[RMDB]
RNA sequence: GGGAACGACUCGAGUAGAGUCGAAAAGGGUAUGCUCAUGACCGAUGAAUGGAUUACCGUGUUUAUUUGGUCCUAUUGCUUCCAUGCUACUAGUAUAGAUCAAAUACUUGAUUCCUAGGUCCACACAAGCUGCCAAUAUAGUCUGUGUUCCAUAAUAAUUAGUAAGACACUUCGGUGUCUUACUAAUAAAAGAAACAACAACAACAAC
Reactivity to 2A3 in 0.01 (KOAc 150mM, MgCl2 10mM, bicine 150mM(pH8.5), 24C), signal-to-noise 5, nucleotides 027 to 156: g110g010g010u100a090u270g030c010u030c070a100u190g000a030c000c010g070a080u120g120a080a100u110g020g040a030u050u140a110c070c080g050u040g060u080u210u030a030u000u010u020g000g000u010c000c000u000a040u040u080g010c010u230u120c060c060a120u230g030c030u070a100c010u010a040g070u080a110u090a150g030a020u010c010a020a000a010u010a030c010u070u130g030a060u100u060c000c000u020a050g030g000u020c100c010a060c000a000c000a080a040g020c000u000g000c000c000a050a010u150a020u050a040g030u030c120u070g060u000g030u050u020c020c010a020u020a160a050u080a030
Reactivity to DMS in 0.01 (KOAc 150mM, MgCl2 10mM, bicine 150mM(pH8.5), 24C), signal-to-noise 3, nucleotides 027 to 156: g020g030g050u000a030u000g030c030u010c040a160u010g010a120c040c020g000a150u020g020a110a110u000g000g020a100u000u010a050c080c030g030u000g010u000u010u000a050u010u010u000g030g010u000c010c060u000a110u010u000g010c020u000u000c080c110a190u010g030c060u000a100c040u000a040g020u000a120u000a040g000a040u000c030a030a030a090u000a040c060u000u000g010a090u000u000c030c030u000a190g010g020u000c030c070a080c050a060c090a050a050g000c000u000g010c040c030a050a130u000a160u010a090g000u000c050u000g030u000g010u000u000c010c000a070u000a040a070u000a140